The record gives the reactivity of an RNA of 207 nucleotides to 2A3 and DMS. The RNA was probed in 150 mM KOAc, 10 mM MgCl2 and 150 mM bicine (pH 8.5) at 24 C. DMS adducts were read by reverse transcription with MarathonRT.

[RMDB]
RNA sequence: GGGAACGACUCGAGUAGAGUCGAAAAUCAAUCGCAUUGUUGGGUGAAAGUUGGAGGAUAAAUCCUCACCAAGAUUUAAAUUAAGCAAGAGAUAUAAGGCCGCUACUUAUAUUGCGACUUGCUUAAAGAUAUCCGGCAAAGUUCGCUUUGCCGGAAACCAAUAAUGUCUGUUCGCAGACAUUAUUGGAAAAGAAACAACAACAACAAC
Reactivity to 2A3 in 0.01 (KOAc 150mM, MgCl2 10mM, bicine 150mM(pH8.5), 24C), signal-to-noise 1, nucleotides 027 to 156: u120c020a030a040u070c020g060c110a010u000u110g030u010u100g030g020g070u150g020a060a090a050g070u140u110g050g000a000g020g000a010u100a060a160a080u110c000c040u020c040a040c000c000a070a020g050a020u130u160u140a060a150a110u030u010a030a080g000c000a010a000g020a010g010a020u000a000u000a000a000g060g070c130c090g080c190u050a040c000u030u000a000u000a010u040u100g070c090g030a080c000u000u010g000c000u020u010a000a000a000g050a000u070a060u070c000c000g010g000c000a010a010a000g020u060u050c080g000c110u000u010u000g000c000c050g000g000a000a000a000
Reactivity to DMS in 0.01 (KOAc 150mM, MgCl2 10mM, bicine 150mM(pH8.5), 24C), signal-to-noise 1, nucleotides 027 to 156: u010c090a120a100u000c090g040c050a190u010u000g020u000u010g010g020g050u010g010a040a030a110g000u000u010g030g000a100g020g020a120u000a060a090a180u000c010c030u000c010a030c100c020a040a060g000a170u000u000u000a030a110a140u000u000a040a050g000c020a010a020g030a300g000a050u000a010u000a000a010g000g010c090c300g030c170u000a080c010u020u010a020u000a010u010u000g000c060g000a130c010u000u000g040c020u030u010a010a000a070g040a150u000a060u000c020c000g000g000c000a020a050a010g010u000u000c300g050c020u010u000u000g010c010c000g000g000a000a000a010